[RMDB]
An RNA of 177 nucleotides, treated with 2A3 and DMS and read out base by base.
RNA sequence: GGGAACGACUCGAGUAGAGUCGAAAAGCCUGCGCUAGUCGUGCGCAGAGAUCGCGAAGUAUAUAAUGUGGCACAUCCUAAUUCCGUAUUGUUCGUGGAUCCGGAUCCUCGUAUGACUUACACGUGACACUGAGGAGUAGUUCGCUACUCCUCAGUGAAAAGAAACAACAACAACAAC
Reactivity to 2A3 in 0.01 (KOAc 150mM, MgCl2 10mM, bicine 150mM(pH8.5), 24C), signal-to-noise 4, nucleotides 027 to 126: g020c000c010u020g010c020g000c040u040a050g090u110c060g080u060g020c000g020c030a000g010a030g010a110u070c030g000c020g080a040a010g120u030a030u000a030u030a210a200u170g030u070g080g000c060a020c050a130u040c010c000u070a110a080u120u030c010c020g050u050a050u080u150g100u070u030c030g030u080g090g010a050u050c010c030g050g010a040u020c000c010u030c040g030u040a040u090g040a030c000u020u050a030c070a010c050g080u070g040a020
Reactivity to DMS in 0.01 (KOAc 150mM, MgCl2 10mM, bicine 150mM(pH8.5), 24C), signal-to-noise 4, nucleotides 027 to 126: g030c090c010u000g000c020g020c010u010a070g000u010c110g030u000g020c000g030c070a050g010a070g010a060u000c050g020c030g000a060a080g010u010a060u000a080u000a070a060u000g020u010g010g000c200a080c090a080u010c030c040u010a120a100u000u000c040c040g000u000a060u000u000g000u000u000c010g040u010g000g020a050u010c030c060g020g000a070u000c050c040u000c030g020u000a050u000g000a070c090u000u000a060c070a070c060g000u000g000a260